[RMDB]
RNA sequence: GGGAACGACUCGAGUAGAGUCGAAAAGAGAUGGCGAGAGCCAUCGGUAGUAUAGCGAAAAUCAUAAAUGAGAAGAGCUCUAAACGCCUAAGUAGAGUUAAAAUAAUUAGACAGGCACUACUACAACCACGGCCUCGAACGUUCGCGUUCGAGGCAAGUAAAUAGUUAACUUCGGUUAACUAUUUACAAAAGAAACAACAACAACAAC
Reactivity to DMS in 0.01 (KOAc 150mM, MgCl2 10mM, bicine 150mM(pH8.5), 24C), signal-to-noise 1, nucleotides 027 to 156: g010a110g010a030u010g000g010c000g030a280g030a300g070c000c010a040u000c000g000g000u000a060g000u000a080u010a020g020c000g010a050a060a080a210u030c020a070u020a050a120a130u010g030a120g000a130a100g030a240g000c010u000c010u000a100a090a060c050g000c040c020u060a040a060g020u000a040g000a060g010u000u000a040a060a040a130u010a030a090u000u010a090g020a080c040a040g020g010c050a050c090u000a060c030u010a050c080a070a110c080c010a060c090g000g010c000c000u000c010g000a010a000c030g000u000u000c260g020c020g040u030u000c000g010a000g030g040c010a010a010
Reactivity to 2A3 in 0.01 (KOAc 150mM, MgCl2 10mM, bicine 150mM(pH8.5), 24C), signal-to-noise 5, nucleotides 027 to 156: g090a000g000a000u000g000g000c010g010a110g000a010g070c000c010a000u000c000g010g010u020a010g000u020a020u110a070g080c090g050a100a060a030a040u130c080a090u130a270a140a100u220g070a100g030a170a070g030a020g010c000u000c000u010a030a030a020c070g000c010c000u050a150a000g010u000a000g010a010g050u250u260a020a010a000a010u100a020a020u210u020a010g000a000c010a010g010g040c020a010c010u030a010c010u020a020c020a080a030c030c040a030c090g100g000c000c000u000c000g000a000a000c000g000u060u060c210g010c000g090u000u000c000g000a000g000g000c000a000a000

Structure probing data (DMS and 2A3) for a 207-nucleotide construct. The DMS profile rests on 1,901 reads. DMS adducts were read by reverse transcription with MarathonRT. The RNA was probed in 150 mM KOAc, 10 mM MgCl2 and 150 mM bicine (pH 8.5) at 24 C. Values cover nucleotides 27 to 156. For 2A3 the reverse transcriptase was SuperScript II with manganese.